Structure probing data (2A3) for a 177-nucleotide construct.
The reactions ran in a buffer of 150 mM KOAc, 10 mM MgCl2 and 150 mM bicine (pH 8.5), at 24 C.
For 2A3, 474 sequencing reads were counted.
Values cover nucleotides 27 to 126.
[RMDB]
RNA sequence: GGGAACGACUCGAGUAGAGUCGAAAAUCAUCCACACCGCCCCACGUGCUGCUCCCAGGGCCUUCCCGUCAGCACCAGCAGUGUAGCUUCUGUCUGGUGAGUCAUACUUGAUAUUUACCUUAAAAUACGCUGAACUCUCGUUCGCGAGAGUUCAGCGAAAAGAAACAACAACAACAAC
Reactivity to 2A3 in 0.01 (KOAc 150mM, MgCl2 10mM, bicine 150mM(pH8.5), 24C), signal-to-noise 1, nucleotides 027 to 126: u010c010a030u030c110c000a050c000a000c020c010g000c000c000c000c010a190c020g080u030g000c100u020g000c000u100c030c000c000a010g060g000g010c000c000u010u010c000c000c000g120u000c010a060g100c000a000c000c010a010g010c000a000g000u000g110u300a130g070c070u100u080c080u010g270u120c000u000g000g000u000g010a010g000u000c000a000u000a190c040u070u120g110a040u000a150u050u270u110a100c000c020u090u010a000a060a060a110u160a070